[RMDB]
RNA sequence: GGGAACGACUCGAGUAGAGUCGAAAACCGGCUGGGCAACGAUCCGAGGGGACUAUCCCUCUCGAGAAUCGGCAAAUGGGCCCCUCGCUCGUAUCUCCGAGAGGAGACGAGAAGGAGGCGGAUCUCCAAACAAUGGCGUUCGCGCCAUUGAAAAGAAACAACAACAACAAC
Reactivity to DMS in 0.01 (KOAc 150mM, MgCl2 10mM, bicine 150mM(pH8.5), 24C), signal-to-noise 6, nucleotides 027 to 129: c040c010g000g000c120u030g010g020g000c010a120a130c040g010a020u030c070c010g020a040g010g000g010g000a190c200u020a160u080c100c000c010u000c030u030c020g030a130g030a120a050u050c030g000g000c100a020a120a110u000g020g060g000c000c040c010c020u010c040g030c000u000c020g000u050a120u040c030u030c010c030g020a280g010a190g020g020a040g000a020c030g000a000g000a110a090g000g000a010g010g050c180g030g010a070u020c000u000c000c000a050a140a140
Reactivity to 2A3 in 0.01 (KOAc 150mM, MgCl2 10mM, bicine 150mM(pH8.5), 24C), signal-to-noise 8, nucleotides 027 to 129: c000c000g020g040c110u100g000g060g010c020a100a060c020g010a010u000c010c000g000a000g020g000g000g010a010c060u140a110u260c030c030c000u020c000u010c000g170a200g020a070a060u020c010g010g020c030a050a060a160u080g010g010g010c000c000c000c000u010c020g030c010u000c000g050u060a160u020c010u000c000c000g030a030g000a040g080g000a000g010a010c000g000a010g000a020a080g170g000a010g000g030c110g010g000a070u040c070u010c040c000a030a030a040
The record gives the reactivity of an RNA of 170 nucleotides to DMS and 2A3. For 2A3, 19,634 sequencing reads were counted. Values are in units of 0.01, from 0 to 300, in steps of 10. The DMS profile rests on 25,253 reads.